RNA sequence: GGGAACGACUCGAGUAGAGUCGAAAAACUCGGGAGGCUGAGGUAGGAGAAUGGCUUGAACCCGGGAGGCGGAGGUUGCAGUGAACCGAGAUCGUGCCAUUGCACUCUGGCCUGGGCAACAAGAGUGAGCUUCAGUGUUUUUCGAAACACUGAAGCUAAAAGAAACAACAACAACAAC
Reactivity to DMS in 0.01 (KOAc 150mM, MgCl2 10mM, bicine 150mM(pH8.5), 24C), signal-to-noise 1, nucleotides 027 to 126: a010c020u000c050g000g030g030a130g000g030c040u000g020a050g000g000u000a050g000g000a000g000a020a050u010g010g030c070u000u000g020a170a100c030c040c000g000g000g020a030g050g010c030g010g010a040g000g010u030u020g050c010a000g010u000g010a030a100c080c020g000a160g000a080u000c120g040u010g010c130c010a030u000u000g000c030a080c000u000c010u000g010g010c000c010u020g000g010g010c030a050a050c040a010a100g000a100g020u000g020
This 177-nucleotide RNA was probed chemically with DMS. Reactivities are rounded to 0.1 and cut off at 0 and 3. Reactivities are given for positions 27 through 126. The data come from the RNA Mapping Database (RMDB), library OK2TRN. For DMS, 1,413 sequencing reads were counted. The reactions ran in a buffer of 150 mM KOAc, 10 mM MgCl2 and 150 mM bicine (pH 8.5), at 24 C. For DMS the reverse transcriptase was MarathonRT.